[RMDB]
RNA sequence: GGGAACGACUCGAGUAGAGUCGAAAACACGACAUGCCAACUAUCUACAUGCGACAAUACCUUCAUUCAACGGCACUGAUUUAUUUGUUACCCCUUGCGAUAAAGAAAUUCUAUCACGUGUUACACUUCAUACAGCUGUACAAGACUGUCACAUACAACCUAAUGACUCCUUCGGGAGUCAUUAGGUAAAAGAAACAACAACAACAAC
Reactivity to DMS in 0.01 (KOAc 150mM, MgCl2 10mM, bicine 150mM(pH8.5), 24C), signal-to-noise 1, nucleotides 027 to 156: c020a100c030g010a050c050a040u000g010c000c060a150a230c070u000a120u010c010u020a060c050a030u010g000c000g020a220c050a120a110u010a070c040c010u020u000c010a110u000u000c030a030a100c070g010g020c020a080c010u020g000a090u000u000u000a030u000u010u010g020u000u000a130c030c010c010c150u000u010g040c070g020a090u000a030a050a060g020a080a040a120u000u000c070u010a050u000c010a070c160g040u000g000u000u000a050c040a020c000u010u000c050a150u000a120c120a100g000c000u010g010u000a080c130a050a130g000a110c050u010g040u000c020a030c020a150u000a040c090a100
Reactivity to 2A3 in 0.01 (KOAc 150mM, MgCl2 10mM, bicine 150mM(pH8.5), 24C), signal-to-noise 3, nucleotides 027 to 156: c050a010c020g110a020c020a020u080g020c030c050a110a060c090u110a080u160c020u100a060c020a050u120g040c030g020a080c050a060a090u100a170c040c000u080u070c050a140u040u030c020a070a100c050g020g050c020a000c020u000g050a060u030u090u080a110u100u110u160g080u040u090a100c020c030c020c020u030u060g050c050g030a040u060a090a140a010g160a030a150a060u200u070c050u080a070u050c050a010c080g050u030g020u020u040a040c040a020c040u050u120c040a020u050a130c020a010g010c060u090g010u060a020c020a050a000g060a070c040u040g030u090c020a040c030a080u150a090c060a050

The record gives the reactivity of an RNA of 207 nucleotides to DMS and 2A3. The DMS profile rests on 1,846 reads.